[RMDB]
RNA sequence: GGGAACGACUCGAGUAGAGUCGAAAAGAGGGAGCCAAUGCCAAAGAGGUGGGGAUCGUCGGAAGGUAUCGUCCCAAUGACCAAGAGAAGGGAAGAAACGGAAGCCUUUCCCCUUGACGCCGGUGAAGUACGAUACGAUGUUCGCAUCGUAUCGUACAAAAGAAACAACAACAACAAC
Reactivity to 2A3 in 0.01 (KOAc 150mM, MgCl2 10mM, bicine 150mM(pH8.5), 24C), signal-to-noise 1, nucleotides 027 to 126: g070a010g000g010g000a000g060c020c050a070a050u110g000c000c000a150a030a030g120a050g090g030u100g000g000g000g030a040u060c030g040u010c030g000g030a030a040g040g000u030a040u110c020g000u000c000c000c050a010a040u100g010a030c030c020a010a030g010a010g010a090a080g060g000g020a050a030g030a010a080a000c060g010g030a000a060g000c040c000u010u070u000c020c010c010c000u020u000g020a000c060g040c030c000g030g010u020g030a120a000
Reactivity to DMS in 0.01 (KOAc 150mM, MgCl2 10mM, bicine 150mM(pH8.5), 24C), signal-to-noise 1, nucleotides 027 to 126: g050a090g000g010g030a050g010c070c040a120a120u000g030c070c080a070a060a170g000a100g000g010u000g000g000g010g000a090u010c080g030u000c070g030g030a130a080g000g020u000a030u000c070g000u000c060c010c010a120a170u000g000a090c070c070a030a080g010a110g000a060a110g000g010g010a010a040g000a020a110a040c110g000g000a080a200g000c020c020u010u010u000c010c000c000c020u010u030g000a080c130g010c020c040g010g000u030g010a030a150